[RMDB]
RNA sequence: GGGAACGACUCGAGUAGAGUCGAAAAUGAUGUGCAUGCAGACGUCGUGAUGUACAAGUUUGGUAGCUCGUGCUACUCGCACAAGCUUUCAGUCAUCAAGGACAUUAUGACCACUCCAUACUUGAUGGGUUUAUGCUUUUUUCGAAAAGCAUAAACCAAAAGAAACAACAACAACAAC
Reactivity to DMS in 0.01 (KOAc 150mM, MgCl2 10mM, bicine 150mM(pH8.5), 24C), signal-to-noise 5, nucleotides 027 to 126: u010g000a090u010g020u000g000c070a080u010g000c090a080g000a120c190g010u000c030g030u000g010a030u010g010u010a020c070a110a180g010u000u010u010g010g010u000a010g020c000u000c040g020u000g000c000u010a090c200u010c110g000c010a020c020a030a010g010c000u000u010u010c040a050g010u000c050a040u000c050a060a140g020g000a050c060a040u010u000a050u010g000a070c050c100a100c030u010c040c040a060u010a070c070u000u000g000a080u000g010
Reactivity to 2A3 in 0.01 (KOAc 150mM, MgCl2 10mM, bicine 150mM(pH8.5), 24C), signal-to-noise 5, nucleotides 027 to 126: u130g040a040u120g030u050g040c050a050u110g000c030a010g030a080c070g030u040c020g020u050g030a030u040g040u050a040c020a090a100g050u060u130u070g050g010u020a010g000c000u000c030g010u020g000c020u090a170c060u020c110g000c000a010c000a010a000g000c000u050u120u130c040a040g030u020c010a030u010c020a070a030g110g000a020c020a040u080u080a050u100g030a040c000c020a050c030u020c020c010a040u050a160c030u030u120g060a080u160g100